[RMDB]
RNA sequence: GGGAACGACUCGAGUAGAGUCGAAAAACCGCCAGCGCCCGAGGCGCGGAAGGUGUCAAUGCGCAGAUCGGCCGGGUUGAUGUCGAUCUCGACAUCGUCGAAUUCCGGGAGAAUCGCCACGGUACAGAAUCAGGGUCUAGUUCGCUAGACCCUGAUUAAAAGAAACAACAACAACAAC
Reactivity to DMS in 0.01 (KOAc 150mM, MgCl2 10mM, bicine 150mM(pH8.5), 24C), signal-to-noise 2, nucleotides 027 to 126: a090c030c000g030c130c070a110g040c110g010c060c050c070g030a090g010g020c010g020c030g000g000a040a070g020g010u010g000u020c070a090a080u000g000c040g020c040a030g000a040u000c050g000g000c000c030g030g020g010u010u000g000a050u000g010u000c000g000a140u000c190u000c020g030a050c010a020u000c010g020u000c080g010a050a180u000u000c000c000g010g010g010a100g010a130a090u010c010g010c020c010a080c100g020g010u000a080c110a120g000
Reactivity to 2A3 in 0.01 (KOAc 150mM, MgCl2 10mM, bicine 150mM(pH8.5), 24C), signal-to-noise 1, nucleotides 027 to 126: a000c040c020g070c080c020a130g000c090g070c140c050c190g100a060g000g050c050g000c000g050g040a140a150g150g050u110g060u100c000a090a090u110g010c020g040c110a030g020a110u030c030g000g110c040c070g040g080g000u130u190g030a030u030g000u000c000g010a180u080c180u030c060g040a020c000a020u030c020g030u020c030g130a040a160u190u000c010c020g020g040g020a160g040a070a040u090c030g020c040c000a080c070g000g000u180a030c030a070g170
Chemical mapping of a 177-nucleotide RNA with DMS and 2A3. For 2A3 the reverse transcriptase was SuperScript II with manganese. Reactivities are given for positions 27 through 126. Source: RMDB library OK2TRN, as collected in RNAgym. DMS adducts were read by reverse transcription with MarathonRT.